[RMDB]
Chemical mapping of a 177-nucleotide RNA with 2A3.
The 2A3 profile rests on 1,269 reads.
RNA sequence: GGGAACGACUCGAGUAGAGUCGAAAAGGAGUGCAGCUCAGGCUGUGAUUUCAAGCUCGGGGGUGCUUUCUGUAACUCUGAAAAAGGACCUCCAAGCCUUGAACAUCACAAUCUGAGGCAAACCAUCAUCGUUUGCCCAAUUCGUUGGGCAAACGAUAAAAGAAACAACAACAACAAC
Reactivity to 2A3 in 0.01 (KOAc 150mM, MgCl2 10mM, bicine 150mM(pH8.5), 24C), signal-to-noise 2, nucleotides 027 to 126: g100g000a060g040u100g000c020a150g080c040u000c010a000g000g000c010u000g000u000g010a000u000u000u000c000a000a000g000c000u020c000g000g000g000g000g020u050g160c010u010u030u030c000u010g140u080a170a180c060u060c030u250g150a150a070a010a000a000g000g000a000c000c000u000c010c000a010a050g000c020c000u000u000g000a010a000c020a110u000c000a000c000a010a000u000c000u010g020a010g010g000c000a000a000a000c050c000a020u150c010